[RMDB]
RNA sequence: GGGAACGACUCGAGUAGAGUCGAAAACACACAAGGUUCGCCUUGUGUGCAAGAAUAGACGAAUACUACCGUAGAAGUAUUCAGGUCACAUAACUACGGAAAUGGCGUUCUGCUUCGGCAGAACGAACCUGUACCGUCAAUUCGUUGACGGUACAGGAAAAGAAACAACAACAACAAC
Reactivity to 2A3 in 0.01 (KOAc 150mM, MgCl2 10mM, bicine 150mM(pH8.5), 24C), signal-to-noise 6, nucleotides 027 to 126: c000a000c000a010c000a000a000g030g030u030u030c120g160c060c000u000u000g000u000g000u000g000c000a030a060g090a100a100u170a130g080a040c050g010a010a010u000a030c010u080a280c000c010g000u010a010g020a160a000g020u010a020u010u010c020a010g170g030u120c060a050c010a250u190a220a100c020u020a000c020g010g110a030a050a100u220g190g000c000g000u020u000c000u000g000c000u030u040c170g120g000c000a000g000a010a010c000g000a000a020
Reactivity to DMS in 0.01 (KOAc 150mM, MgCl2 10mM, bicine 150mM(pH8.5), 24C), signal-to-noise 3, nucleotides 027 to 126: c000a010c010a000c010a020a010g000g010u000u010c210g040c010c000u000u000g020u000g010u000g000c040a050a050g000a140a090u000a130g010a060c120g010a020a010u000a010c000u000a120c010c030g000u010a010g040a180a030g000u010a000u000u000c030a050g020g010u030c070a090c100a080u000a080a160c020u000a020c010g030g020a160a100a120u010g000g000c030g000u000u000c000u000g010c000u000u020c220g020g000c000a000g010a000a000c000g000a040a050